[RMDB]
RNA sequence: GGGAACGACUCGAGUAGAGUCGAAAAUAACUGAAAUGCUUUAUGAGAGGAGUUUUCUUCCGCAAUGACUAAUAAAAAAGUAGUUCGCGUUGUCGUUAUCUUAAUGCUAAUCGCGAUUGUAUUAUCCCAUAUUGAGUAUCUUCGGAUACUCAAUAUGAAAAGAAACAACAACAACAAC
Reactivity to DMS in 0.01 (KOAc 150mM, MgCl2 10mM, bicine 150mM(pH8.5), 24C), signal-to-noise 5, nucleotides 027 to 126: u000a070a120c140u000g020a080a110a100u000g000c020u000u000u010a050u020g000a280g000a070g010g000a110g000u010u000u000u010c030u000u000c040c030g020c110a040a060u000g000a060c050u010a030a080u030a020a050a080a080a070a070g000u000a060g010u000u000c030g010c120g020u000u000g010u000c030g000u000u000a040u010c150u000u000a030a030u000g000c040u000a050a060u000c080g010c100g000a060u000u010g020u000a070u000u000a070u000c090c080
Reactivity to 2A3 in 0.01 (KOAc 150mM, MgCl2 10mM, bicine 150mM(pH8.5), 24C), signal-to-noise 3, nucleotides 027 to 126: u010a010a050c030u060g070a110a150a210u090g010c000u060u080u080a050u090g040a060g010a040g050g010a040g000u070u080u020u060c030u100u000c050c020g050c060a050a100u110g020a050c040u040a050a080u130a190a140a030a070a010a010g070u060a010g020u050u040c020g000c000g030u010u050g060u070c010g030u000u020a080u170c070u050u100a040a020u080g000c040u050a050a060u090c010g030c020g060a040u040u080g030u030a080u130u030a010u060c000c010